[RMDB]
This 177-nucleotide RNA was probed chemically with 2A3 and DMS. Reactivities are rounded to 0.1 and cut off at 0 and 3. Reactivities are given for positions 27 through 126. The reactions ran in a buffer of 150 mM KOAc, 10 mM MgCl2 and 150 mM bicine (pH 8.5), at 24 C. For 2A3, 8,106 sequencing reads were counted. 2A3 adducts were read by reverse transcription with SuperScript II with manganese. For DMS the reverse transcriptase was MarathonRT.

RNA sequence: GGGAACGACUCGAGUAGAGUCGAAAACAUGUGUACUUCGGUACACAUGAAAUGACCGCCAUUAUUGGCUAAGGCUACAGGGACGGCCGGGUCAAAUGCCGAAAAUCGUUGCGUUCGCGCAACGAAAGUUGUAUAGCACGUUCGCGUGCUAUACAACAAAAGAAACAACAACAACAAC
Reactivity to 2A3 in 0.01 (KOAc 150mM, MgCl2 10mM, bicine 150mM(pH8.5), 24C), signal-to-noise 3, nucleotides 027 to 126: c010a000u010g000u000g010u000a010c000u040u060c210g070g000u010a000c010a000c000a000u000g000a020a000a010u060g010a010c000c010g130c020c000a120u160u140a160u300u230g010g000c050u090a180a110g010g000c000u050a040c150a120g010g010g220a070c060g020g000c000c000g010g000g000u010c020a020a010a040u110g000c020c020g070a100a010a010a050u040c000g000u000u000g020c000g010u020u030c250g000c000g000c070a010a000c000g010a020a000a010
Reactivity to DMS in 0.01 (KOAc 150mM, MgCl2 10mM, bicine 150mM(pH8.5), 24C), signal-to-noise 3, nucleotides 027 to 126: c010a010u010g020u000g020u010a000c000u000u020c180g050g010u000a010c000a000c000a000u000g000a030a100a110u010g000a040c000c000g000c030c000a070u040u020a140u010u000g010g000c010u010a080a090g020g010c000u000a090c130a160g010g000g010a080c050g020g000c020c000g010g000g010u000c000a030a080a090u010g020c030c000g020a090a030a060a110u000c000g010u000u000g000c010g030u000u010c230g020c000g010c000a000a010c000g000a000a030a030